Overview
Conditions: 150 mM KOAc, 10 mM MgCl2 and 150 mM bicine (pH 8.5), 24 C. This 177-nucleotide RNA was probed chemically with 2A3 and DMS. It was measured as part of the RMDB library VIROID. 2A3 is a SHAPE reagent: it acylates the 2'-hydroxyl of flexible nucleotides of all four kinds.
RNA sequence: GGGAACGACUCGAGUAGAGUCGAAAAGGGGCAGAGGGGGAAUGAGCCUCGUCGUCGACGAAGGGGUGCAUUCCGAGUGCCUGAGCUGGUCGACGUCCAGCUCCCUCGGGACCACGCUGCUCUGGGCGAACAGAGCUCUGUUCGCAGAGCUCUGUUCAAAAGAAACAACAACAACAAC
Reactivity to 2A3 in 0.01 (KOAc 150mM, MgCl2 10mM, bicine 150mM(pH8.5), 24C), signal-to-noise 1, nucleotides 027 to 126: g040g010g020g000c030a010g040a070g040g050g000g000g030a060a040u100g030a020g070c010c000u030c000g010u020c020g040u040c070g090a300c070g000a070a050g000g020g010g030u030g020c020a030u120u000c020c000g020a010g010u060g010c040c100u010g010a000g020c000u020g000g080u100c120g170a260c140g080u010c000c000a000g000c000u020c010c000c000u000c000g000g010g010a020c020c010a030c060g040c020u020g000c010u050c000u040g000g110g040c100
Reactivity to DMS in 0.01 (KOAc 150mM, MgCl2 10mM, bicine 150mM(pH8.5), 24C), signal-to-noise 2, nucleotides 027 to 126: g000g000g000g020c010a030g020a110g010g020g010g000g010a060a040u010g010a260g000c030c010u000c000g010u000c000g010u000c130g000a120c020g000a030a040g020g000g010g010u010g000c030a050u010u000c000c040g020a050g000u000g030c210c150u000g000a010g000c010u000g000g020u000c070g000a150c300g030u000c000c010a020g000c000u000c000c050c000u010c020g000g010g020a150c130c020a040c040g000c020u000g000c000u000c000u000g000g000g000c200